[RMDB]
RNA sequence: GGGAACGACUCGAGUAGAGUCGAAAAGAGACAGUGGAUCGCUAGUCGAGUACGCUAGUGAUCCGUGUGAUCCAUGCCAUGUCUAGCUAGAUCAUGACAUGGUACAGUACCGUACCUAGAUCUGCUAUCCCGUUAAUCAAUUCGUUGAUUAACGGGAAAAAGAAACAACAACAACAAC
Reactivity to DMS in 0.01 (KOAc 150mM, MgCl2 10mM, bicine 150mM(pH8.5), 24C), signal-to-noise 7, nucleotides 027 to 126: g010a130g010a080c050a090g010u020g020g010a010u000c000g010c020u000a000g000u010c050g010a280g010u020a130c300g020c010u000a000g010u000g010a010u000c000c000g010u000g000u000g020a120u010c020c020a150u010g000c010c010a020u010g000u000c030u000a120g010c110u010a060g010a040u010c030a120u010g010a030c040a030u000g000g010u000a020c090a070g010u000a090c100c050g000u010a090c070c050u000a100g000a050u000c000u010g000c120u000a160
Reactivity to 2A3 in 0.01 (KOAc 150mM, MgCl2 10mM, bicine 150mM(pH8.5), 24C), signal-to-noise 4, nucleotides 027 to 126: g110a000g010a010c020a040g100u060g070g000a000u000c010g000c020u000a000g030u110c040g030a070g170u200a060c080g000c020u010a010g000u000g020a000u010c000c000g000u000g010u030g010a090u000c020c020a030u050g030c000c000a050u050g010u000c030u030a020g060c070u120a030g010a080u060c030a040u110g040a030c020a030u040g010g020u010a030c010a010g030u050a090c020c100g040u050a060c020c020u040a070g010a100u020c010u040g030c040u090a130